RNA sequence: GGGAACGACUCGAGUAGAGUCGAAAAGGGAAACUCUUUCGAUGCUUUUUGGGACGAACAACAUUAUGUUCAGGGGACUUCCGAAAACGUUCGAAGACGAAACGGAGAAAAGGUUCGGAGCAGGAUACCUUGUUGCGAAAGCAGAAGAAGGCGAAAACUUGGUGCAUUCUUUCGAGAAUGCACCAAGAAAAGAAACAACAACAACAAC
Reactivity to DMS in 0.01 (KOAc 150mM, MgCl2 10mM, bicine 150mM(pH8.5), 24C), signal-to-noise 1, nucleotides 027 to 156: g020g000g000a170a080a150c050u000c010u010u060u000c070g010a140u000g000c030u000u000u000u000u000g040g040g010a070c040g000a070a060c060a050a150c140a140u010u000a040u000g020u000u010c040a090g060g010g020g040a090c080u010u010c010c000g010a070a030a040a200c010g000u000u000c050g030a240a120g010a060c000g000a070a070a130c010g030g020a180g010a090a050a030a100g000g010u000u000c020g000g000a080g010c070a030g010g010a090u000a060c030c020u000u010g030u000u020g000c000g020a120a190a110g030c040a060g030a110a080g000a060a040g010g030c000g000a060a040a040a150
Reactivity to 2A3 in 0.01 (KOAc 150mM, MgCl2 10mM, bicine 150mM(pH8.5), 24C), signal-to-noise 2, nucleotides 027 to 156: g050g020g010a050a100a050c050u070c000u070u060u040c050g060a050u090g080c080u030u090u070u120u070g020g000g020a040c080g020a030a040c040a030a030c010a120u170u200a130u300g020u100u030c110a130g000g010g000g050a040c020u030u000c050c000g000a040a040a020a000c040g030u070u070c030g030a070a020g030a040c040g030a040a050a020c020g000g010a030g010a040a080a010a000g030g000u070u060c010g020g020a020g000c010a010g040g020a030u040a070c020c000u070u060g050u070u050g020c040g010a030a030a030g010c000a000g000a060a000g020a020a000g060g000c060g040a040a160a000a040